[RMDB]
RNA sequence: GGGAACGACUCGAGUAGAGUCGAAAAGAGCGCAGGCGAUCCAGGCGCUGGGCUUCGGAUGAAGAGCAGGUGGAUCACCUAAUGUGCUUGUACAGAGUCCACGGUUCCGGUGUCGAUGCGGAGAGCGCUUGUGAAGCGGAGCAUGCCGCGUCAGGAGACGUUUAAGAACGUUCGCGUUCUUAAACGUAAAAGAAACAACAACAACAAC
Reactivity to DMS in 0.01 (KOAc 150mM, MgCl2 10mM, bicine 150mM(pH8.5), 24C), signal-to-noise 2, nucleotides 027 to 156: g020a030g050c020g000c030a180g040g010c080g020a010u000c000c060a150g040g030c140g040c010u000g010g010g020c000u010u000c040g050g040a150u000g030a040a070g000a130g030c020a050g010g000u010g010g000a060u000c020a020c080c060u040a020a060u000g010u000g030c020u000u000g010u010a170c120a120g000a300g020u000c010c040a130c040g000g010u000u000c030c030g010g020u000g040u000c050g000a030u000g000c040g000g010a120g000a120g040c040g000c000u000u000g050u010g010a130a110g060c030g010g010a190g060c080a140u020g000c020c000g020c010g000u010c000a080g000g000a300g000
Reactivity to 2A3 in 0.01 (KOAc 150mM, MgCl2 10mM, bicine 150mM(pH8.5), 24C), signal-to-noise 3, nucleotides 027 to 156: g050a000g020c030g000c020a040g040g000c000g030a010u000c030c030a040g160g070c110g050c140u060g030g090g000c040u040u080c060g090g130a150u220g040a090a060g000a020g040c000a000g000g090u030g010g040a050u090c020a070c000c000u100a170a150u100g030u040g060c020u000u030g050u010a030c010a070g030a010g110u010c030c020a050c060g000g020u140u100c010c010g000g040u040g020u060c020g000a040u070g050c020g020g020a020g010a050g010c040g040c060u100u090g080u020g080a050a000g020c020g000g040a030g060c040a040u110g070c000c000g000c000g020u030c010a020g000g030a030g010
This 207-nucleotide RNA was probed chemically with DMS and 2A3. Values cover nucleotides 27 to 156. The 2A3 profile rests on 1,482 reads. Source: RMDB library OK3TST, as collected in RNAgym.